This 207-nucleotide RNA was probed chemically with DMS and 2A3.
For DMS the reverse transcriptase was MarathonRT.
It was measured as part of the RMDB library M2RFPK.
RNA sequence: GGGAACGACUCGAGUAGAGUCGAAAAGAAGGGUGAAAGCCCUUGAUACUGUAGUGGCAAUUAUAAAUAAGAAGAGUUCUGAGUUGCUUAAGCAGAACUAAAAUAAAAAGACAAGCAUUAUUACAAACAUGGCGAGGUAAGUUCGCUUACCUCGCAAGUUAUACUACUGCUUCGGCAGUAGUAUAACAAAAGAAACAACAACAACAAC
Reactivity to DMS in 0.01 (KOAc 150mM, MgCl2 10mM, bicine 150mM(pH8.5), 24C), signal-to-noise 1, nucleotides 027 to 156: g020a050a010g000g010g050u000g010a200a160a300g000c000c030c040u000u000g010a160u010a080c060u000g040u000a090g020u010g000g000c010a100a070u010u000a110u000a020a050a090u020a100a110g010a090a150g000a120g000u000u000c000u010g000a090g010u010u000g000c050u000u000a090a160g010c000a040g010a060a050c030u010a020a010a070a100u000a030a040a160a090a150g010a110c080a020a100g020c050a010u000u010a050u000u000a050c110a070a030a070c090a080u000g030g000c000g000a010g010g030u000a000a060g040u010u010c260g020c010u000u000a020c000c010u010c080g030c010a000a010
Reactivity to 2A3 in 0.01 (KOAc 150mM, MgCl2 10mM, bicine 150mM(pH8.5), 24C), signal-to-noise 3, nucleotides 027 to 156: g070a000a000g020g000g000u060g020a090a030a020g010c020c000c000u000u000g030a050u050a050c060u060g040u100a020g040u010g040g000c010a020a020u070u060a080u140a300a150a030u200a090a020g080a060a020g050a020g050u020u030c010u020g030a020g020u080u060g030c020u050u030a080a010g010c000a000g010a000a020c060u050a010a020a000a010u080a010a100a020a000a000g020a010c060a020a010g000c010a000u030u060a050u130u140a190c090a050a140a010c050a070u130g060g010c000g000a000g000g000u010a000a000g000u000u100c100g010c110u000u000a000c000c000u000c010g010c000a000a000